Chemical mapping of a 177-nucleotide RNA with DMS. DMS adducts were read by reverse transcription with MarathonRT. DMS (dimethyl sulfate) methylates the pairing face of unpaired adenines and cytosines.
RNA sequence: GGGAACGACUCGAGUAGAGUCGAAAAGAUAUGGAUCGCAGUGGACUUUUGACGGACGUGGUAUCGGAAACGAUACCCGUCCGAUAAGUCUUGCGAUCCUAAGUCAAAAUCACCUGUUCGCAGGUGACUUAGAAUGCUGCUUCGGCAGCAUUCUAAGAAAAGAAACAACAACAACAAC
Reactivity to DMS in 0.01 (KOAc 150mM, MgCl2 10mM, bicine 150mM(pH8.5), 24C), signal-to-noise 1, nucleotides 027 to 126: g000a010u010a300u010g000g000a020u000c000g020c010a030g030u010g040g040a020c000u000u000u000u030g040a270c240g030g020a020c000g040u040g020g020u000a000u020c000g010g030a060a040a160c010g000a010u000a000c000c010c000g000u000c000c040g020a010u010a010a020g010u020c000u010u010g020c030g000a010u000c000c000u000a020a020g010u000c030a100a120a250a300u000c000a020c000c010u000g000u000u010c290g030c020a000g000g000u000g000a010